[RMDB]
RNA sequence: GGGAACGACUCGAGUAGAGUCGAAAAACUUAACACAUGCAAGUCGAACGAUGAAGCCCUUCGGGGUGGAUUAGUGGCGAACGGGUGAGUAACACGUGGGCAAUCUGCCCUUCACUCUGGGACAAGCAAAUAAAUAAAUUUUCGAAUUUAUUUAUUUAAAAGAAACAACAACAACAAC
Reactivity to 2A3 in 0.01 (KOAc 150mM, MgCl2 10mM, bicine 150mM(pH8.5), 24C), signal-to-noise 4, nucleotides 027 to 126: a000c080u120u080a170a010c080a010c020a100u170g050c110a060a030g030u010c010g030a070a010c020g030a020u030g010a020a010g010c000c020c000u030u080c160g070g020g000g000u040g000g000a000u000u030a040g040u070g050g000c040g030a060a010c060g010g000g010u030g010a060g040u120a110a050c070a010c230g080u090g000g010g000c030a070a170u080c130u220g000c010c000c000u000u010c020a020c000u030c030u070g040g020g040a040c020a030a040g080c000
Reactivity to DMS in 0.01 (KOAc 150mM, MgCl2 10mM, bicine 150mM(pH8.5), 24C), signal-to-noise 7, nucleotides 027 to 126: a090c030u010u010a090a050c120a090c120a100u020g020c040a090a220g000u000c010g010a110a040c050g000a020u000g000a300a200g000c000c000c010u000u040c160g030g010g000g010u000g010g000a060u000u010a020g010u010g000g000c030g020a140a090c080g000g000g020u000g000a020g020u050a070a120c160a070c230g010u010g010g000g010c010a130a120u030c180u020g010c000c000c000u000u010c030a010c000u010c010u010g000g010g000a110c150a070a140g000c110